RNA sequence: GGGAACGACUCGAGUAGAGUCGAAAAGAAGAGAAGCGCGCGAAUUGGAAACCAGCGAACCCUAUUACGCGCGCAAGGAACCGGGCCUUGGUUCCUUGGAAAGACUAGAUAAUAUCGCUGGUAAAGACGGUCGUAGUAUGUUCGCAUACUACGACCGAAAAGAAACAACAACAACAAC
Reactivity to 2A3 in 0.01 (KOAc 150mM, MgCl2 10mM, bicine 150mM(pH8.5), 24C), signal-to-noise 2, nucleotides 027 to 126: g080a040a050g060a000g040a070a060g060c000g000c010g000c010g000a010a010u010u010g020g050a030a080a150c000c010a010g010c000g010a040a020c000c000c000u000a030u060u150a150c000g000c000g000c000g000c000a000a000g000g000a020a000c030c000g000g290g030c050c050u100u120g000g000u020u000c000c000u000u040g060g010a110a080a030g070a020c080u100a060g060a150u170a150a180u060a080u110c000g000c040u000g010g020u110a060a000a000g050a000
An RNA of 177 nucleotides, treated with 2A3 and read out base by base. The RNA was probed in 150 mM KOAc, 10 mM MgCl2 and 150 mM bicine (pH 8.5) at 24 C. For 2A3, 975 sequencing reads were counted.